[RMDB]
RNA sequence: GGGAACGACUCGAGUAGAGUCGAAAAAAGGAGUGCGUGCCUGCUACGAACGCUCCAACGAGUACCAGCUGAUUGACUGUGCCCAGUAGUAAGUAACCGCCACCCAACCCAUCAGCACAUAAAACAGACAAAAACAAGAAAACAUGAAAACCUGUGACUCUAGGAACGCUUUCGAGCGUUCCUAGAGAAAAGAAACAACAACAACAAC
Reactivity to 2A3 in 0.01 (KOAc 150mM, MgCl2 10mM, bicine 150mM(pH8.5), 24C), signal-to-noise 1, nucleotides 027 to 156: a000a000g040g030a030g030u010g040c030g040u040g030c020c030u010g040c010u040a030c010g050a170a020c000g010c040u030c040c060a010a000c000g030a020g040u060a110c030c050a020g030c000u020g120a210u210u100g030a080c040u050g050u070g140c010c000c000a010g010u080a000g000u060a160a120g000u000a000a080c000c050g030c010c000a030c000c030c000a050a020c030c070c000a030u060c020a000g150c020a010c010a110u160a010a100a060a010c010a040g060a010c030a040a070a000a030a000c000a040a040g060a040a100a000a000c040a010u150g050a050a020a120a030c070c010u000g050u020g030a040

Description: An RNA of 207 nucleotides, treated with 2A3 and read out base by base. It was measured as part of the RMDB library OK3TST. The 2A3 profile rests on 602 reads.